Structure probing data (DMS) for a 177-nucleotide construct. DMS adducts were read by reverse transcription with MarathonRT. The RNA was probed in 150 mM KOAc, 10 mM MgCl2 and 150 mM bicine (pH 8.5) at 24 C. For DMS, 10,067 sequencing reads were counted.

RNA sequence: GGGAACGACUCGAGUAGAGUCGAAAAUGUCACACAGUAGCGAGGGAUGCAAUUAAUUGCAUCUACACCAAGCUCAAGGCUUGGAUUUCGACUAGUGUCGAGUCGUUCCCAGUCGCUACGCCCACAAUAUAUGUAUAGGCUUCGGCCUAUACAUAUAAAAAGAAACAACAACAACAAC
Reactivity to DMS in 0.01 (KOAc 150mM, MgCl2 10mM, bicine 150mM(pH8.5), 24C), signal-to-noise 6, nucleotides 027 to 126: u000g010u000c100a090c110a130c100a110g020u010a030g010c020g010a060g010g000g000a010u000g000c000a000a040u010u010a100a070u000u000g010c000a000u000c000u000a070c090a170c010c000a000a010g000c000u000c150a100a090g010g010c010u000u000g000g000a170u000u000u010c000g000a020c010u000a050g010u000g000u000c000g000a010g000u000c000g010u000u000c000c000c000a010g010u000c020g010c030u000a020c060g000c010c010c020a080c150a080a120